[RMDB]
RNA sequence: GGGAACGACUCGAGUAGAGUCGAAAAUUUGUGGCAACAAUCUAAGCUCAGAGUUACUUAUAAGGAAUAUAAAUAAAGUUCAACCUGUGGCAAAUUUGCACUUUCUCCUUGAACUAUGUUGCUCUCACUCAGUGGUAGAUUUCGAUCUACCACUGAGAAAAGAAACAACAACAACAAC
Reactivity to 2A3 in 0.01 (KOAc 150mM, MgCl2 10mM, bicine 150mM(pH8.5), 24C), signal-to-noise 2, nucleotides 027 to 126: u110u180u110g070u000g120g000c000a020a000c010a030a090u080c020u120a130a000g040c000u000c000a000g030a040g040u020u020a010c020u090u080a100u010a170a100g080g000a060a000u070a040u150a230a120a000u140a040a100a000g020u080u020c020a010a020c030c050u050g050u100g170g000c010a070a070a050u030u010u010g040c010a020c080u000u050u000c200u050c000c000u090u160g060a040a020c050u140a160u140g000u000u010g000c000u000c000u000c000a000
Reactivity to DMS in 0.01 (KOAc 150mM, MgCl2 10mM, bicine 150mM(pH8.5), 24C), signal-to-noise 1, nucleotides 027 to 126: u000u000u020g020u030g000g000c040a060a050c130a060a110u070c160u010a080a120g010c010u000c010a010g000a090g000u020u000a020c070u000u000a060u030a100a100g010g000a070a080u020a160u010a100a080a090u040a090a040a070g010u010u000c070a020a010c030c000u000g040u030g020g000c000a050a050a090u010u000u010g010c030a020c010u000u000u000c000u000c000c020u000u010g050a090a000c210u010a090u000g020u000u000g010c050u020c050u000c050a300

Overview: Chemical mapping of a 177-nucleotide RNA with 2A3 and DMS. Source: RMDB libraries RFM100 and RFMREP, as collected in RNAgym. The RNA was probed in 150 mM KOAc, 10 mM MgCl2 and 150 mM bicine (pH 8.5) at 24 C. DMS adducts were read by reverse transcription with MarathonRT. Reactivities are rounded to 0.1 and cut off at 0 and 3. As a SHAPE reagent, 2A3 marks flexible, mostly unpaired nucleotides at the ribose 2'-OH.